RNA sequence: GGGAACGACUCGAGUAGAGUCGAAAACGCGCAUCUGCUCAAUCAACACUUUCAGCUCGAUGGCGGAGUUUGUCACUUCGGCAUUGAUAGACUUCGACGCAAGAGUGUUCGACUCGCGGUUGAACUCCGAGCACAAGGUAUUCGUACCUUGUGCUCGAAAAGAAACAACAACAACAAC
Reactivity to 2A3 in 0.01 (KOAc 150mM, MgCl2 10mM, bicine 150mM(pH8.5), 24C), signal-to-noise 2, nucleotides 027 to 126: c060g030c010g010c030a070u010c030u050g000c010u020c050a080a090u050c030a050a100c020a030c120u070u150u090c060a020g010c030u020c030g100a090u060g050g090c010g030g010a010g000u020u130u120g090u070c030a010c030u040u110c050g110g030c070a040u000u080g010a020u060a030g020a010c000u050u040c080g050a050c050g000c080a060a010g030a000g040u030g030u030u030c010g000a000c000u000c010g060c030g010g050u010u040g020a000a010c010u050c020
Reactivity to DMS in 0.01 (KOAc 150mM, MgCl2 10mM, bicine 150mM(pH8.5), 24C), signal-to-noise 2, nucleotides 027 to 126: c100g010c070g000c090a080u000c030u010g010c030u010c070a100a080u000c060a040a060c100a040c080u000u000u000c090a120g020c080u000c080g030a100u000g020g010c010g010g000a010g010u000u000u000g010u000c110a060c030u000u000c090g010g010c070a070u000u000g000a030u000a050g000a040c050u000u000c020g030a070c100g030c040a110a150g000a070g000u000g020u000u000c010g020a040c030u010c040g000c090g000g000u000u010g000a020a260c030u000c020
An RNA of 177 nucleotides, treated with 2A3 and DMS and read out base by base. The DMS profile rests on 1,922 reads. Conditions: 150 mM KOAc, 10 mM MgCl2 and 150 mM bicine (pH 8.5), 24 C. DMS adducts were read by reverse transcription with MarathonRT.